Record summary:
Structure probing data (DMS and 2A3) for a 177-nucleotide construct. Conditions: 150 mM KOAc, 10 mM MgCl2 and 150 mM bicine (pH 8.5), 24 C. For DMS the reverse transcriptase was MarathonRT. As a SHAPE reagent, 2A3 marks flexible, mostly unpaired nucleotides at the ribose 2'-OH. For DMS, 33,712 sequencing reads were counted.
[RMDB]
RNA sequence: GGGAACGACUCGAGUAGAGUCGAAAAGAGUAAGGCGGCCACAGCAGAACCGUUCAUGUCGCAGCCGCUGUCAGAUUCUGGUGAAUCUGCGAAUUCUGCUGUAGAGCACGGAAUAGGACCGUGCAAACCAGUAUAGCUGAUUCGUCAGCUAUACUGGAAAAGAAACAACAACAACAAC
Reactivity to DMS in 0.01 (KOAc 150mM, MgCl2 10mM, bicine 150mM(pH8.5), 24C), signal-to-noise 9, nucleotides 027 to 126: g010a130g020u030a100a100g010g020c010g000g010c010c250a020c010a010g010c000a010g000a030a100c190c100g010u020u030c130a110u030g010u000c060g010c110a130g010c030c010g000c030u010g000u030c020a000g000a020u000u000c000u010g020g020u040g000a010a000u000c000u000g010c040g010a060a090u010u000c010u000g000c000u010g020u000a070g010a210g000c000a000c010g010g010a110a140u030a120g020g020a090c000c000g010u000g010c000a040a070a140
Reactivity to 2A3 in 0.01 (KOAc 150mM, MgCl2 10mM, bicine 150mM(pH8.5), 24C), signal-to-noise 9, nucleotides 027 to 126: g100a010g110u190a140a070g050g010c000g010g000c020c040a030c000a030g000c000a000g010a030a030c070c070g090u130u140c130a090u200g100u130c060g010c090a020g010c010c000g010c020u000g020u010c000a000g020a080u050u010c020u240g200g030u300g080a010a020u010c000u000g000c000g010a020a020u050u010c000u000g000c000u000g010u040a050g020a000g060c000a000c000g010g040a070a080u140a180g050g080a040c000c000g000u000g000c000a010a010a030